The data come from the RNA Mapping Database (RMDB), library OK1LIB. This 177-nucleotide RNA was probed chemically with 2A3. For 2A3 the reverse transcriptase was SuperScript II with manganese. Reactivities are rounded to 0.1 and cut off at 0 and 3. For 2A3, 666 sequencing reads were counted. The RNA was probed in 150 mM KOAc, 10 mM MgCl2 and 150 mM bicine (pH 8.5) at 24 C.

[RMDB]
RNA sequence: GGGAACGACUCGAGUAGAGUCGAAAAUCGACUUGAUAUUUCUGUUUUACAUUUUAAAGAAACAUUUCCAGACUUCUUAGUGCCUUUCUUUAACACACAAGAGAUAAUUGCGAUUUUGUCUGAUAUCCUGUUGGAGAACCUUCGGGUUCUCCAACAGAAAAGAAACAACAACAACAAC
Reactivity to 2A3 in 0.01 (KOAc 150mM, MgCl2 10mM, bicine 150mM(pH8.5), 24C), signal-to-noise 2, nucleotides 027 to 126: u020c010g150a150c060u080u120g010a060u100a040u120u030u000c030u030g190u030u030u030u220a080c110a060u080u200u090u060a050a040a000g010a000a010a000c000a040u040u090u210c150c050a080g060a130c090u100u080c030u160u220a040g030u010g010c030c020u040u050u050c060u020u040u060a140a030c060a020c030a010c000a250a100g010a000g000a030u020a040a010u050u070g010c010g000a000u050u020u010u010g060u000c010u000g040a040u000a120u190c070